[RMDB]
RNA sequence: GGGAACGACUCGAGUAGAGUCGAAAAGCCGCCGUACUUUGGUCUGCGCAACUACGGGCAGCCCGGCCAGUACGGCAUCGAGGCGACCCCGGCCGAGUACGUCGAGAAGCUGCGGAAGCUGUUCGGCGAGCUGCGCCGCGUCCUGGCCGACGACGGCCACGUGACGGAAUUUCGAUUCCGUCACGUGAAAAGAAACAACAACAACAAC
Reactivity to 2A3 in 0.01 (KOAc 150mM, MgCl2 10mM, bicine 150mM(pH8.5), 24C), signal-to-noise 1, nucleotides 027 to 156: g020c020c010g000c000c000g020u000a000c010u160u130u220g010g020u010c030u090g000c110g030c120a130a080c130u230a160c190g020g090g000c060a020g010c050c010c030g010g000c010c000a000g000u000a000c000g000g000c000a000u050c100g030a050g000g010c000g020a100c000c010c000c000g030g000c030c050g050a020g040u110a080c020g000u010c000g000a000g010a100a060g000c040u080g020c060g130g170a010a020g000c010u050g060u080u100c000g020g000c020g000a030g000c040u110g020c030g020c040c010g000c030g000u030c010c040u080g030g000c060c030g000a060c050g030a040c000g010g000c000